[RMDB]
An RNA of 177 nucleotides, treated with DMS and read out base by base.
RNA sequence: GGGAACGACUCGAGUAGAGUCGAAAAGAUAGCUCGUUCGCGAGCUAUCAAAUAGGCGCAGUGGGCUAGCGCCACUCAAAAGCCCGAAAGGAAGAGAGACAAAAAGGUGGUCCUUCGGGACCACCAAGAUGUCAAGUUGGUUCGCCAACUUGACAUCAAAAGAAACAACAACAACAAC
Reactivity to DMS in 0.01 (KOAc 150mM, MgCl2 10mM, bicine 150mM(pH8.5), 24C), signal-to-noise 1, nucleotides 027 to 126: g020a000u000a000g020c000u000c000g020u000u010c180g010c000g030a000g000c000u010a000u000c000a000a120a130u010a140g010g010c000g030c000a160g000u000g000g000g020c010u010a080g020c000g000c000c000a030c020u000c000a050a040a010a030g000c000c000c000g030a070a070a100g010g000a030a030g000a030g000a060g010a070c070a050a070a030a080a040g000g020u000g000g000u000c000c000u000u000c160g030g010g010a010c000c000a010c000c000a000a020
The data come from the RNA Mapping Database (RMDB), library M2PK50. The RNA was probed in 150 mM KOAc, 10 mM MgCl2 and 150 mM bicine (pH 8.5) at 24 C.